Chemical mapping of a 177-nucleotide RNA with DMS.
Values cover nucleotides 27 to 126.
Conditions: 150 mM KOAc, 10 mM MgCl2 and 150 mM bicine (pH 8.5), 24 C.
For DMS, 1,266 sequencing reads were counted.
It was measured as part of the RMDB library OK2TST.
[RMDB]
RNA sequence: GGGAACGACUCGAGUAGAGUCGAAAAGCAAAGGUGAUGUGGUACUGAUUGAAGCGGGCGACACCGUGCCCUGCGAUGGUGAAGUGCUGGAAGGCGGUGCCUCAGUCGAUGAAAGCGCCAUUACCGGUAUUGGGUACACCUUCGGGUGUACCCAAUAAAAAGAAACAACAACAACAAC
Reactivity to DMS in 0.01 (KOAc 150mM, MgCl2 10mM, bicine 150mM(pH8.5), 24C), signal-to-noise 1, nucleotides 027 to 126: g030c110a070a070a110g010g040u000g010a030u020g020u010g020g020u000a060c040u020g000a100u000u010g000a100a130g070c040g040g010g010c010g030a190c060a050c050c050g000u000g010c050c010c000u010g020c090g010a060u010g010g010u010g000a110a090g020u020g020c020u000g030g010a070a030g010g000c040g010g010u000g000c030c000u000c020a060g030u000c070g020a100u010g000a070a100a070g000c050g030c010c010a080u000u000a100c020c030g000g000